[RMDB]
RNA sequence: GGGAACGACUCGAGUAGAGUCGAAAACCGUAGGGAAAUGGAGUACGCUCCCACACAACAGCAGAGCUUCGAAAGAGGCUCUGACAUGUGUGGGAAGCGUACUGCGAAGUUUCCCUAAACGGAAAUCACAGAAUGAGGUUCGCCUCAUUCUGUGAAAGCAUCACAUAAACUUCGGUUUAUGUGAUGCAAAAGAAACAACAACAACAAC
Reactivity to DMS in 0.01 (KOAc 150mM, MgCl2 10mM, bicine 150mM(pH8.5), 24C), signal-to-noise 1, nucleotides 027 to 156: c020c000g030u000a070g000g020g000a000a020a030u010g000g020a020g070u000a010c000g020c010u010c010c000c000a030c010a010c000a060a120c080a200g060c020a010g020a030g050c000u020u020c000g000a270a170a300g000a020g010g020c000u000c000u000g000a010c060a300u000g010u000g030u000g000g000g000a010a040g010c010g020u000a020c000u010g020c080g010a150a300g010u000u000u000c000c000c010u020a000a030a110c030g000g000a060a080a220u000c010a050c000a020g030a040a010u010g030a010g010g020u000u000c300g030c000c000u000c000a030u000u000c010u000g000u000g010a020a070a170
Reactivity to 2A3 in 0.01 (KOAc 150mM, MgCl2 10mM, bicine 150mM(pH8.5), 24C), signal-to-noise 3, nucleotides 027 to 156: c000c000g010u020a030g000g010g030a010a010a020u140g040g040a020g020u000a000c000g010c010u030c000c040c000a000c000a000c000a010a100c050a020g060c000a000g000a000g020c010u010u010c010g090a060a070a050g010a010g000g010c000u010c000u020g000a010c000a030u030g010u010g000u010g010g010g010a020a000g010c010g000u000a000c000u010g010c020g030a090a020g020u010u000u000c000c000c000u000a040a040a000c020g010g020a060a080a050u030c000a000c000a000g000a000a000u010g000a000g020g060u080u130c270g140c030c000u010c000a010u000u000c000u000g000u000g000a000a000a000

Overview
Chemical mapping of a 207-nucleotide RNA with DMS and 2A3. For 2A3 the reverse transcriptase was SuperScript II with manganese. Reactivities are rounded to 0.1 and cut off at 0 and 3. The reactions ran in a buffer of 150 mM KOAc, 10 mM MgCl2 and 150 mM bicine (pH 8.5), at 24 C.